[RMDB]
RNA sequence: GGGAACGACUCGAGUAGAGUCGAAAAAUCAUACUGUAGUCUUAACCUUCUAUGAGUCAAUAUCGUUAGGCUCAUCUGACACCUGACGCACUCGUACAGACUACAGUAUGUGUACGGUCCUUCAAUCAGGUGUCAGAUGAGCCUGAUAGAAGGACAAGAUUAAAUAAUCGUUCGCGAUUAUUUAAUCAAAAGAAACAACAACAACAAC
Reactivity to DMS in 0.01 (KOAc 150mM, MgCl2 10mM, bicine 150mM(pH8.5), 24C), signal-to-noise 1, nucleotides 027 to 156: a120u000c020a070u000a080c020u010g040u000a070g000u000c010u030u000a100a150c050c060u010u000c030u010a070u000g020a120g000u000c050a100a120u010a170u020c060g050u000u000a020g010g020c010u000c010a040u000c050u000g010a060c060a040c020c000u000g000a040c000g020c070a070c130u000c060g080u020a060c050a130g000a100c020u020a030c030a060g020u000a010u000g000u000g030u000a030c040g000g030u000c030c100u000u000c120a120a090u000c000a000g040g010u010g010u010c000a030g000a030u010g000a090g000c010c000u020g000a000u000a060g000a060a030g000g000a080c060a090a170
Reactivity to 2A3 in 0.01 (KOAc 150mM, MgCl2 10mM, bicine 150mM(pH8.5), 24C), signal-to-noise 4, nucleotides 027 to 156: a000u070c000a010u010a020c010u000g010u000a010g010u040c010u100u130a110a110c030c000u070u060c030u080a130u170g060a010g110u060c060a190a150u080a100u250c060g050u080u100a020g000g000c000u000c000a000u000c000u000g000a000c000a000c020c010u030g030a040c060g040c130a060c050u200c060g030u120a050c040a040g000a020c000u000a000c000a000g000u000a010u010g010u000g000u010a030c040g030g110u040c020c020u050u110c110a040a120u030c010a010g050g000u020g000u010c000a000g010a010u010g000a000g000c000c000u000g000a000u000a000g000a000a010g050g020a040c040a120a050
Structure probing data (DMS and 2A3) for a 207-nucleotide construct.
For 2A3 the reverse transcriptase was SuperScript II with manganese.
High 2A3 reactivity points to a flexible backbone, as in loops and unpaired stretches.
The DMS profile rests on 2,318 reads.
For DMS the reverse transcriptase was MarathonRT.
It was measured as part of the RMDB library OK3TST.